[RMDB]
RNA sequence: GGGAACGACUCGAGUAGAGUCGAAAACGAGAAGCUCUGCGAGGUGGAAGACGAGGGCAUCGAAGGCGUGAUCUGCGGCCGGGCGAUCUACUCGGGCGACCUCGAUUUCGCCGCCGCGCAAAAGCGAUGCCAGUAUAUACUUCGGUAUAUACUGGCAAAAAGAAACAACAACAACAAC
Reactivity to DMS in 0.01 (KOAc 150mM, MgCl2 10mM, bicine 150mM(pH8.5), 24C), signal-to-noise 4, nucleotides 027 to 126: c060g000a150g000a160a190g010c010u000c140u000g010c020g000a060g000g020u000g000g000a090a050g000a080c030g000a020g000g010g010c060a060u000c030g000a120a200g010g010c120g010u000g000a030u000c040u000g040c040g000g000c080c120g010g000g000c040g000a050u000c030u000a050c020u000c010g000g000g010c090g010a060c010c010u000c010g000a090u000u000u000c130g010c020c000g010c020c010g000c000g000c020a020a050a090a050g010c010g000a130
Reactivity to 2A3 in 0.01 (KOAc 150mM, MgCl2 10mM, bicine 150mM(pH8.5), 24C), signal-to-noise 2, nucleotides 027 to 126: c050g020a040g030a180a040g020c030u010c060u050g010c020g020a010g010g000u040g010g020a020a010g030a010c010g010a020g000g040g020c040a100u090c040g040a080a020g120g030c200g050u070g030a070u010c040u200g010c010g080g000c050c040g030g040g010c010g000a000u000c010u050a020c020u010c010g010g010g000c010g030a070c010c000u010c000g120a190u020u030u050c060g000c020c030g000c010c020g000c010g000c020a010a030a080a000g110c000g000a010